[RMDB]
RNA sequence: GGGAACGACUCGAGUAGAGUCGAAAACCAGUGUGUGCUUGGCGUGUUUUCAGGGAGGCAGAGAAAGGCUCUCCUAAUGCACGACAGACCCGCCCAGAAUGGCCUCUCUGUUCCUAGGAGUGCGACAGCACCGUCAUUGGUUCGCCAAUGACGGUGCAAAAGAAACAACAACAACAAC
Reactivity to 2A3 in 0.01 (KOAc 150mM, MgCl2 10mM, bicine 150mM(pH8.5), 24C), signal-to-noise 1, nucleotides 027 to 126: c000c000a060g020u080g000u000g000u020g050c030u090u060g070g010c020g000u050g000u020u070u060u130c070a000g000g010g020a000g000g000c020a010g030a030g090a250a090a070g100g000c020u000c020u040c090c020u050a050a040u100g000c030a000c060g040a020c030a000g070a020c010c000c050g000c000c010c010a020g080a070a090u080g110g000c000c050u030c000u000c020u060g030u120u040c010c000u010a040g000g060a030g020u070g060c030g050a020c050a030
Reactivity to DMS in 0.01 (KOAc 150mM, MgCl2 10mM, bicine 150mM(pH8.5), 24C), signal-to-noise 1, nucleotides 027 to 126: c010c020a150g020u050g030u000g000u010g010c050u000u000g010g030c000g020u000g010u000u000u010u000c070a060g020g000g010a020g000g030c030a070g020a060g010a050a240a210g030g030c010u010c040u000c000c010u010a030a060u020g000c030a040c080g000a070c120a080g010a040c030c020c050g010c010c030c050a160g000a120a120u030g000g010c000c000u000c030u000c040u020g000u010u000c020c030u000a130g010g000a040g000u010g020c000g010a100c250a120